This 177-nucleotide RNA was probed chemically with DMS and 2A3. For DMS, 4,602 sequencing reads were counted. For 2A3, 9,198 sequencing reads were counted. 2A3 adducts were read by reverse transcription with SuperScript II with manganese. Reactivities are given for positions 27 through 126. For DMS the reverse transcriptase was MarathonRT.
RNA sequence: GGGAACGACUCGAGUAGAGUCGAAAACACUUGGAGUUCGCUCCAAGUGAAACCAUUGCCGAUUGGCAAUAUUACCGCAGGCGGUAAAGCGGAACAAAUAAGAAAGCGAAGACUUCGGUCUUCGCAAGAGAUAGGAGAAGUUCGCUUCUCCUAUCUCAAAAGAAACAACAACAACAAC
Reactivity to DMS in 0.01 (KOAc 150mM, MgCl2 10mM, bicine 150mM(pH8.5), 24C), signal-to-noise 4, nucleotides 027 to 126: c020a010c000u000u000g000g000a020g010u000u010c220g030c010u000c000c000a000a010g000u000g000a040a090a160c020c010a070u000u000g010c000c000g010a160u020u000g000g010c000a020a010u010a090u000u010a090c020c030g010c020a100g020g000c090g010g000u000a030a040a090g000c020g020g020a170a070c210a060a080a080u020a050a130g000a100a110a130g010c000g000a010a000g000a020c000u000u000c140g030g010u000c000u000u000c000g010c010a010a020
Reactivity to 2A3 in 0.01 (KOAc 150mM, MgCl2 10mM, bicine 150mM(pH8.5), 24C), signal-to-noise 8, nucleotides 027 to 126: c000a000c000u000u000g010g000a000g020u070u060c120g090c100u000c000c000a000a000g000u000g000a030a010a000c010c010a020u010u030g010c010c040g300a300u170u300g010g000c000a000a010u110a100u100u130a080c010c010g010c030a060g130g050c130g090g000u140a140a060a010g020c020g010g030a060a060c040a050a110a050u260a120a070g150a170a080a010g000c000g010a000a000g000a000c000u020u080c230g030g000u000c000u000u000c000g000c000a000a000